[RMDB]
RNA sequence: GGGAACGACUCGAGUAGAGUCGAAAAUGGUAGGUAUGCUACCGCUCUGAAAGGACAGGACUACUUACCUUGUCUUACAUUUCUGCGUGUGCAUAAAAAGUAGGUGUCACACCAGAGUGGUAGCCAAGGGUUAAUCAUACUUCGGUAUGAUUAACCCAAAAGAAACAACAACAACAAC
Reactivity to DMS in 0.01 (KOAc 150mM, MgCl2 10mM, bicine 150mM(pH8.5), 24C), signal-to-noise 2, nucleotides 027 to 126: u030g030g010u000a030g000g030u030a080u060g000c000u010a010c000c000g000c030u000c000u000g020a010a240a110g000g010a000c060a050g000g000a220c130u010a050c020u000u010a080c130c180u000u010g010u020c010u020u000a040c120a060u030u050u000c070u040g000c120g000u000g000u000g040c060a040u000a040a020a070a060a040g000u010a020g000g010u010g010u030c000a050c070a120c200c000a030g000a000g000u000g010g000u020a000g000c040c220a040a090
Reactivity to 2A3 in 0.01 (KOAc 150mM, MgCl2 10mM, bicine 150mM(pH8.5), 24C), signal-to-noise 8, nucleotides 027 to 126: u120g060g040u070a060g060g040u100a050u240g030c010u000a000c000c010g000c010u020c000u020g120a170a090a070g050g000a010c000a020g100g050a080c030u020a020c020u080u050a040c030c000u010u060g040u020c010u040u140a050c050a110u100u180u130c110u110g050c070g050u030g010u020g000c020a020u100a100a150a030a030a020g110u120a060g070g130u060g060u120c030a070c010a030c100c010a000g000a000g000u000g010g000u010a010g000c000c000a070a050